The record gives the reactivity of an RNA of 177 nucleotides to DMS and 2A3. It was measured as part of the RMDB library OK2TST. 2A3 adducts were read by reverse transcription with SuperScript II with manganese. Reactivities are given for positions 27 through 126. As a SHAPE reagent, 2A3 marks flexible, mostly unpaired nucleotides at the ribose 2'-OH.
RNA sequence: GGGAACGACUCGAGUAGAGUCGAAAACGCAUGAUUGUCAGUUAGUGGAAAAACUUCCCGUUGAAGAGUGGGAUAUCCCUCUUCCUGCGGUGGUUACACCGUCGAAAGUCUGGGAGUGGUAAGGGCAGUGGAGGAGGUAUUUCGAUACCUCCUCCACAAAAGAAACAACAACAACAAC
Reactivity to DMS in 0.01 (KOAc 150mM, MgCl2 10mM, bicine 150mM(pH8.5), 24C), signal-to-noise 2, nucleotides 027 to 126: c090g010c120a060u000g010a060u000u000g000u010c030a120g000u010u000a130g010u020g010g010a030a100a080a130a030c080u000u010c170c000c040g020u000u020g000a040a020g010a020g010u020g050g010g000a130u010a100u000c000c000c010u000c000u000u000c000c140u000g010c000g010g000u000g000g020u000u040a100c040a020c000c020g020u000c120g010a050a130a110g000u000c080u000g000g010g010a050g020u000g000g000u000a060a080g010g000g020c140a060
Reactivity to 2A3 in 0.01 (KOAc 150mM, MgCl2 10mM, bicine 150mM(pH8.5), 24C), signal-to-noise 1, nucleotides 027 to 126: c050g040c000a020u050g160a180u120u130g020u140c050a040g040u060u260a060g050u060g090g090a100a070a030a010a070c030u130u010c010c000c040g000u020u050g030a040a000g010a000g020u300g030g000g110a150u150a150u300c040c000c000u040c000u010u000c010c000u000g020c010g000g000u010g020g040u160u190a070c010a010c010c000g000u020c040g050a210a040a000g010u010c010u040g040g020g000a060g000u030g030g000u110a090a110g030g030g020c060a050

About this RNA:
Conditions: 150 mM KOAc, 10 mM MgCl2 and 150 mM bicine (pH 8.5), 24 C.